[RMDB]
RNA sequence: GGGAACGACUCGAGUAGAGUCGAAAAUAUUUGGACCUAUGCAAUAGGACUUUAGGGUAACGCUUCAGGGUAGGAAUACAGCAGAGUCCCCUAAUUUCUUGUGUGCCUUAGCCAUCUGAAUAGGAGAAACUCCUUACGAGGUUCGCCUCGUAAGGAGGAAGAGUAAGGUCUUCGGACCUUACUCUUCAAAAGAAACAACAACAACAAC
Reactivity to 2A3 in 0.01 (KOAc 150mM, MgCl2 10mM, bicine 150mM(pH8.5), 24C), signal-to-noise 2, nucleotides 027 to 156: u120a020u030u030u010g020g000a030c000c020u010a010u040g010c020a050a060u030a060g000g010a010c020u030u030u020a020g030g000g010u080a140a020c050g010c040u050u070c060a070g040g030g030u030a030g020g100a070a100u080a060c010a020g010c010a010g040a020g140u100c000c010c000c000u010a030a050u020u030u050c030u020u050g030u020g030u050g060c010c020u020u010a000g000c030c020a030u010c050u020g030a060a030u040a090g100g020a110g100a100a060a050c010u000c010c000u000u000a000c000g010a000g020g000u040u070c120g070c020c000u000c000g000u000a000a010g010g000a000g000
Reactivity to DMS in 0.01 (KOAc 150mM, MgCl2 10mM, bicine 150mM(pH8.5), 24C), signal-to-noise 1, nucleotides 027 to 156: u000a030u000u030u000g040g020a080c050c000u000a070u000g000c030a050a110u000a030g020g010a030c000u000u000u000a060g000g000g000u000a090a040c070g010c020u000u000c080a140g000g040g040u000a030g020g040a090a220u000a050c040a090g000c120a100g000a110g000u000c090c050c020c010u010a040a020u000u000u000c020u020u020g040u010g010u000g010c010c100u000u000a040g020c040c060a030u000c030u000g000a070a070u000a080g000g020a120g000a090a090a270c000u000c000c000u000u000a030c020g020a070g020g010u000u000c300g010c000c000u000c020g000u000a000a000g020g010a000g000
Structure probing data (2A3 and DMS) for a 207-nucleotide construct. For 2A3 the reverse transcriptase was SuperScript II with manganese. For 2A3, 1,944 sequencing reads were counted.